[RMDB]
RNA sequence: GGGAACGACUCGAGUAGAGUCGAAAAAGAGGCCUUGAAGGAAGGAAGCCCAAGGGUCUCUCCUGGCUCUGCUUCCCCAUCACUGCCUCCACUUCCCCGCAUCCCUUUCCCUGGCAGAGGCUUCUUGCAGUUCGUACACAUUCGUGUGUACGAACUGAAAAGAAACAACAACAACAAC
Reactivity to DMS in 0.01 (KOAc 150mM, MgCl2 10mM, bicine 150mM(pH8.5), 24C), signal-to-noise 2, nucleotides 027 to 126: a120g020a030g010g010c010c060u000u000g040a180a060g030g010a220a160g020g050a160a130g030c100c300c080a200a090g020g000g000u000c030u050c190u010c130c070u000g000g000c010u000c090u020g000c020u000u010c000c020c000c060a060u010c080a030c040u000g010c030c040u000c010c070a070c140u000u000c020c010c000c210g020c040a110u020c000c010c010u000u000u010c010c000c030u020g010g010c050a080g010a100g000g000c010u000u000c010u000u000g000
Reactivity to 2A3 in 0.01 (KOAc 150mM, MgCl2 10mM, bicine 150mM(pH8.5), 24C), signal-to-noise 2, nucleotides 027 to 126: a000g010a000g000g000c000c040u030u010g020a080a010g030g020a140a140g050g040a070a040g040c000c050c050a030a070g050g010g010u030c020u000c010u030c090c060u030g010g000c010u000c020u060g030c000u020u030c000c000c000c000a020u040c010a010c020u000g010c010c000u040c000c000a050c070u040u040c000c000c000c000g010c020a040u020c000c000c000u030u060u000c000c000c010u010g050g020c010a030g010a030g070g020c010u030u010c010u010u020g000

This 177-nucleotide RNA was probed chemically with DMS and 2A3.
The RNA was probed in 150 mM KOAc, 10 mM MgCl2 and 150 mM bicine (pH 8.5) at 24 C.
DMS adducts were read by reverse transcription with MarathonRT.